[RMDB]
RNA sequence: GGGAACGACUCGAGUAGAGUCGAAAACUUUCGGUACGAAUGAGGAUUUUCCUGUCGUCAACACAUAUUCCUGUGGGAUAUGGAACCGUUACGGAAUAGGCAAACGACCUAUUCCCUAAUGCAGUUCCACCCGUCCAAACUUCGGUUUGGACGGGUGAAAAGAAACAACAACAACAAC
Reactivity to DMS in 0.01 (KOAc 150mM, MgCl2 10mM, bicine 150mM(pH8.5), 24C), signal-to-noise 2, nucleotides 027 to 126: c060u010u040u000c010g020g040u010a030c030g000a070a030u060g030a010g010g000a110u030u000u070u030c040c000u000g000u000c020g000u000c080a020a230c140a030c030a040u000a010u020u020c000c050u010g090u030g000g030g000a040u000a000u010g030g000a000a000c000c020g000u000u000a020c300g010g000a000a000u000a000g000g020c000a180a110a050c300g000a230c000c000u000a010u000u000c000c000c020u000a000a080u000g020c210a080g010u000u000c060
Reactivity to 2A3 in 0.01 (KOAc 150mM, MgCl2 10mM, bicine 150mM(pH8.5), 24C), signal-to-noise 4, nucleotides 027 to 126: c040u070u080u110c000g020g030u020a020c010g030a010a000u280g130a130g010g030a060u060u080u090u270c000c000u010g060u000c000g010u000c090a110a040c050a020c000a010u010a040u040u080c000c020u130g130u300g120g010g010a020u020a010u100g010g010a010a010c010c000g020u020u050a030c040g000g000a000a000u000a010g040g010c060a220a160a110c080g070a120c000c000u000a000u000u000c000c000c000u160a070a050u080g040c030a060g040u010u060c000

Conditions: 150 mM KOAc, 10 mM MgCl2 and 150 mM bicine (pH 8.5), 24 C. Chemical mapping of a 177-nucleotide RNA with DMS and 2A3. For DMS, 2,058 sequencing reads were counted. Source: RMDB libraries RFM100 and RFMREP, as collected in RNAgym. Values cover nucleotides 27 to 126.